[RMDB]
RNA sequence: GGGAACGACUCGAGUAGAGUCGAAAAGCAGGAUUCUUUAGGCUUUAUCAGUGUAAUCUCUGCCUUUUAAGAUAUGUACAGAAAAUGUCCAUAUAAAUUUCCAUUGAAGUCGAAUGAUACUGAGAAGAGGUUCUAUCCAGUUCGCUGGAUAGAACCUAAAAGAAACAACAACAACAAC
Reactivity to 2A3 in 0.01 (KOAc 150mM, MgCl2 10mM, bicine 150mM(pH8.5), 24C), signal-to-noise 2, nucleotides 027 to 126: g040c000a020g000g070a030u050u000c030u060u260u180a120g080g140c070u110u040u130a180u170c050a030g000u030g060u250a070a010u090c180u000c000u110g050c000c020u000u010u020u020a140a050g040a080u010a000u000g000u000a020c000a000g030a050a150a080a100u040g000u000c000c000a000u000a000u000a000a040a050u000u030u000c000c030a040u000u190g150a100a050g090u030c030g000a010a100u060g100a050u010a100c060u030g000a010g030a120a000g030